[RMDB]
RNA sequence: GGGAACGACUCGAGUAGAGUCGAAAAAGAGAAAACGUAACCGUGAUGUCGUUAGUAACGGCGAGUGAACGCGACACAGUCCAAACCGAAGCCUUCGGGCAAUGUGGUGUUCGGACUGACAACCACUACCAGACUCUGAUUUCGAUCAGAGUCUGGUAAAAGAAACAACAACAACAAC
Reactivity to 2A3 in 0.01 (KOAc 150mM, MgCl2 10mM, bicine 150mM(pH8.5), 24C), signal-to-noise 1, nucleotides 027 to 126: a000g170a000g020a000a120a020a000c090g040u090a000a030c040c010g090u040g020a050u000g010u010c000g000u000u000a000g000u000a010a000c010g230g030c170g070a020g000u000g000a000a000c000g020c010g000a010c010a000c000a000g010u000c000c020a110a000a000c060c000g030a050a000g020c000c020u060u080c250g030g000g000c010a000a010u030g060u130g000g010u080g110u140u100c060g040g000a000c010u000g000a000c030a010a060c080c040a000c060u020